[RMDB]
RNA sequence: GGGAACGACUCGAGUAGAGUCGAAAACUCAGUAAAUGCGCUGUUUUCCAUCAGGAAAUACAGGCUACCGAAACAUGCGUCUCUAUGCAGGCGACAACCGGGAGGUUGACGUCCCUGCGAUAAGCCAGAAAAGGCAAUUGUUCGCAAUUGCCUUUUCAAAAGAAACAACAACAACAAC
Reactivity to DMS in 0.01 (KOAc 150mM, MgCl2 10mM, bicine 150mM(pH8.5), 24C), signal-to-noise 1, nucleotides 027 to 126: c010u000c020a100g020u050a010a040a110u010g000c030g000c010u000g030u010u000u000u010c010c020a250u000c240a150g030g010a020a000a010u000a040c010a020g030g000c000u020a110c190c020g010a070a030a180c190a040u010g000c050g010u020c050u000c020u010a130u010g000c000a010g000g000c050g010a080c010a000a020c010c000g030g050g000a190g000g020u000u000g010a040c030g000u020c110c010c020u010g030c000g010a090u000a050a050g000c050c100a130
Reactivity to 2A3 in 0.01 (KOAc 150mM, MgCl2 10mM, bicine 150mM(pH8.5), 24C), signal-to-noise 1, nucleotides 027 to 126: c000u020c030a000g050u170a000a120a120u110g060c300g050c010u000g020u000u030u010u000c020c080a170u180c070a180g000g020a000a040a000u160a040c000a010g050g020c000u030a030c000c100g070a120a070a030c020a020u200g000c050g070u030c010u020c010u110a000u250g000c010a030g000g020c030g010a000c010a000a000c010c000g050g110g010a120g120g000u000u000g000a000c000g050u130c050c020c050u010g010c010g030a010u000a090a000g050c000c000a010
Description:
Chemical mapping of a 177-nucleotide RNA with DMS and 2A3. The DMS profile rests on 895 reads. The data come from the RNA Mapping Database (RMDB), library RFMREP.